[RMDB]
RNA sequence: GGGAACGACUCGAGUAGAGUCGAAAACGAGAAGGCCAUGAAGGUGUCGAUCAACAUUGCGCCUGACACCGAUCAGUUCCGUAAGGAUCUGAAGAGGGAUAUCGCAGAGAUCGAACGGACGACGAAGGCUUCCAUCGGCGUCAAGGCUGACUUGGACCAUUCAUCGAGUGUUCGCACUCGAUGAAUGAAAAGAAACAACAACAACAAC
Reactivity to 2A3 in 0.01 (KOAc 150mM, MgCl2 10mM, bicine 150mM(pH8.5), 24C), signal-to-noise 3, nucleotides 027 to 156: c010g000a010g010a030a000g030g020c030c000a100u170g120a100a040g210g040u270g010u070c000g010a020u050c020a010a130c050a190u070u140g010c020g000c030c020u040g040a040c010a070c070c010g040a030u010c010a000g000u010u000c010c000g020u070a080a130g010g000a000u000c000u020g030a050a040g060a070g060g050g000a050u080a020u190c010g000c000a000g010a000g000a080u010c010g000a040a000c000g020g020a010c000g000a000c000g010a040a030g100g010c000u200u090c020c020a080u010c000g000g010c000g020u020c040a100a060g010g000c010u030g010a030c000u010u020g030g030a020c010
Reactivity to DMS in 0.01 (KOAc 150mM, MgCl2 10mM, bicine 150mM(pH8.5), 24C), signal-to-noise 2, nucleotides 027 to 156: c040g040a040g010a100a250g000g030c000c020a080u040g030a210a150g010g060u000g010u010c080g000a000u000c010a160a120c220a250u010u040g020c020g000c070c040u010g000a150c130a100c010c040g010a210u000c000a010g000u000u020c010c000g000u020a300a290g040g010a020u000c000u000g000a070a050g000a190g000g000g000a180u000a080u010c050g000c000a100g000a240g000a040u010c030g000a090a190c010g000g030a070c020g040a040c040g010a060a180g000g000c190u000u000c080c020a300u000c060g030g020c030g000u000c090a120a180g030g000c040u000g000a180c000u010u010g020g020a160c210
Conditions: 150 mM KOAc, 10 mM MgCl2 and 150 mM bicine (pH 8.5), 24 C. Structure probing data (2A3 and DMS) for a 207-nucleotide construct. Values cover nucleotides 27 to 156. 2A3 adducts were read by reverse transcription with SuperScript II with manganese. DMS adducts were read by reverse transcription with MarathonRT.